[RMDB]
RNA sequence: GGGAACGACUCGAGUAGAGUCGAAAAGACCAAUAACAGAAUGCACCACAGCGUAAAAUCAUCUGAUUGGGUGAGUUGGUCGCACCGCCAUUUGACGACCGAACGCCAAGCCUAAGCCGUCUUUGUGAACACGAGCUAGUCUUCGGACUAGCUCGAACUGAUAGCUUUGGUUCGCCAAAGCUAUCAGAAAAGAAACAACAACAACAAC
Reactivity to 2A3 in 0.01 (KOAc 150mM, MgCl2 10mM, bicine 150mM(pH8.5), 24C), signal-to-noise 2, nucleotides 027 to 156: g070a030c010c010a020a020u160a060a020c060a070g100a210a060u110g040c020a030c030c030a040c070a070g040c090g040u100a040a070a080a050u080c030a010u040c030u090g120a140u040u170g030g010g010u030g040a140g040u000u020g010g010u000c000g020c030a050c040c010g050c030c020a100u090u030u110g090a050c010g010a000c000c000g040a010a000c000g010c030c020a080a020g000c000c020u070a030a000g020c020c010g010u050c000u060u050u050g110u050g070a120a010c050a010c140g000a010g000c000u000a000g000u000c000u010u010c200g060g000a010c000u000a000g000c000u000c000g000a000a000
Reactivity to DMS in 0.01 (KOAc 150mM, MgCl2 10mM, bicine 150mM(pH8.5), 24C), signal-to-noise 1, nucleotides 027 to 156: g000a110c020c070a050a050u000a140a300c070a260g000a110a140u000g000c020a090c000c010a060c040a060g020c040g030u010a040a020a050a160u000c020a070u000c040u010g020a230u000u000g010g000g050u000g020a040g000u010u000g000g020u000c060g000c070a040c060c020g090c020c030a200u000u000u000g050a100c040g050a060c070c050g110a090a040c000g000c030c030a090a090g030c040c000u020a110a120g010c010c020g000u000c030u020u000u000g030u020g000a200a170c100a140c000g010a050g030c000u000a010g000u000c020u000u000c300g040g030a080c000u020a010g000c000u000c000g000a030a040

Structure probing data (2A3 and DMS) for a 207-nucleotide construct.
For DMS, 1,464 sequencing reads were counted.
It was measured as part of the RMDB library M2RFPK.
For 2A3 the reverse transcriptase was SuperScript II with manganese.
The RNA was probed in 150 mM KOAc, 10 mM MgCl2 and 150 mM bicine (pH 8.5) at 24 C.
For 2A3, 1,238 sequencing reads were counted.